This 207-nucleotide RNA was probed chemically with 2A3. The RNA was probed in 150 mM KOAc, 10 mM MgCl2 and 150 mM bicine (pH 8.5) at 24 C. It was measured as part of the RMDB library ARCHII. For 2A3, 2,367 sequencing reads were counted. 2A3 adducts were read by reverse transcription with SuperScript II with manganese.
RNA sequence: GGGAACGACUCGAGUAGAGUCGAAAAAUUAUGCAGGGAACUACUUUAGGGGUGUCUCGACCUGAAGUAGAUUAAUUGGGACUGGCUAAGCAUAGAGCCUGCCACUUGGCGCUAUGUGAGGUGAGAUAUUAGUGAAGUUGGCUAAGCAUGUAGAUGCCGGUCAUAUGAAGUUCGCUUCAUAUGACCGAAAAGAAACAACAACAACAAC
Reactivity to 2A3 in 0.01 (KOAc 150mM, MgCl2 10mM, bicine 150mM(pH8.5), 24C), signal-to-noise 3, nucleotides 027 to 156: a000u210u160a060u140g070c060a070g020g000g020a030a040c000u010a000c010u020u000u000a000g000g010g000g010u040g000u010c000u000c010g000a000c000c000u000g010a000a000g000u030a010g010a020u060u130a010a030u160u080g000g000g010a000c000u010g060g020c010u020a010a030g000c000a000u010a000g000a010g000c000c010u010g020c010c010a020c010u010u030g010g000c000g000c010u000a000u000g010u030g020a040g000g050u060g050a020g020a020u170a120u100u140a040g020u010g070a020a000g020u140u080g060g000c020u070a060a020g020c010a020u040g070u240a070g050a250u030g000c020